Structure probing data (2A3 and DMS) for a 177-nucleotide construct. For DMS, 2,831 sequencing reads were counted. Source: RMDB library 15KREP, as collected in RNAgym. DMS adducts were read by reverse transcription with MarathonRT. As a SHAPE reagent, 2A3 marks flexible, mostly unpaired nucleotides at the ribose 2'-OH.
[RMDB]
RNA sequence: GGGAACGACUCGAGUAGAGUCGAAAACUGACCUGACCCCUCCCCCAGCGGGUCGCCCAGGAAUGGCGGGACCCCACUUCAGCAGGGUCCGCGUUCCAUCCUUUCUUACCUGAUGGCCGGCAUGGUCCACCAUACAUAACUUCGGUUAUGUAUGGUGAAAAGAAACAACAACAACAAC
Reactivity to 2A3 in 0.01 (KOAc 150mM, MgCl2 10mM, bicine 150mM(pH8.5), 24C), signal-to-noise 2, nucleotides 027 to 126: c000u040g050a050c010c000u050g230a230c000c000c030c010u060c000c000c000c000c000a010g000c030g000g000g000u000c000g020c020c010c000a020g020g050a060a030u120g300g230c070g000g000g010a040c020c000c000c000a090c060u190u130c060a040g030c030a030g010g000g000u020c000c010g070c000g040u020u030c000c000a020u040c010c000u050u080u070c020u070u090a100c040c040u100g070a170u120g080g000c050c010g010g160c120a130u140g040g000u020c030
Reactivity to DMS in 0.01 (KOAc 150mM, MgCl2 10mM, bicine 150mM(pH8.5), 24C), signal-to-noise 3, nucleotides 027 to 126: c120u000g020a050c010c020u000g000a270c060c010c030c040u000c010c010c020c010c030a070g020c050g010g000g020u000c030g000c020c040c020a110g000g010a040a020u000g010g020c020g010g020g010a040c000c010c000c030a060c090u000u010c180a130g040c160a090g010g010g020u000c000c000g000c030g010u000u000c010c000a110u000c060c060u000u000u010c060u000u000a110c090c070u010g000a100u000g000g000c040c020g020g030c090a070u010g020g010u000c100